[RMDB]
The record gives the reactivity of an RNA of 177 nucleotides to DMS and 2A3. In probing experiments dimethyl sulfate is read out at A N1 and C N3, which are open when not base-paired. For DMS the reverse transcriptase was MarathonRT. For DMS, 13,048 sequencing reads were counted. It was measured as part of the RMDB library OK1LIB. The reactions ran in a buffer of 150 mM KOAc, 10 mM MgCl2 and 150 mM bicine (pH 8.5), at 24 C.
RNA sequence: GGGAACGACUCGAGUAGAGUCGAAAAUAUGGGCCUUUUUGCUAUGUGCAAAUAAACAGCUUUCGCUUCGAGACCGAUUGCCACGGUCAGUGGCGCGAAGGCAGGCAGAGUUUAUUGUGUAGCAUUCGGCUUUCGUUAGCUUCGGCUAACGAAGGCCAAAAGAAACAACAACAACAAC
Reactivity to DMS in 0.01 (KOAc 150mM, MgCl2 10mM, bicine 150mM(pH8.5), 24C), signal-to-noise 3, nucleotides 027 to 126: u030a060u020g010g000g010c110c000u000u000u010u010u000g000c000u010a010u020g000u040g010c060a050a030a010u010a010a020a010c020a160g020c000u000u000u000c000g010c000u000u020c010g000a230g000a020c000c000g020a090u010u050g020c220c260a100c010g000g000u000c010a010g030u030g000g000c120g010c010g000a020a000g000g000c000a060g010g000c220a120g020a120g000u000u000u000a010u010u000g000u000g020u000a020g000c010a050u040u010c130
Reactivity to 2A3 in 0.01 (KOAc 150mM, MgCl2 10mM, bicine 150mM(pH8.5), 24C), signal-to-noise 4, nucleotides 027 to 126: u180a070u060g030g040g020c010c000u040u020u000u070u020g010c000u000a010u060g120u060g070c030a040a020a000u010a000a010a010c010a010g000c000u000u000u000c000g000c000u000u010c020g030a010g000a000c000c000g040a050u020u170g060c040c020a060c010g000g010u000c000a000g010u060g020g000c000g010c000g000a000a000g010g000c010a000g090g030c050a010g040a010g080u000u020u010a020u020u050g030u000g020u020a010g010c010a020u070u080c110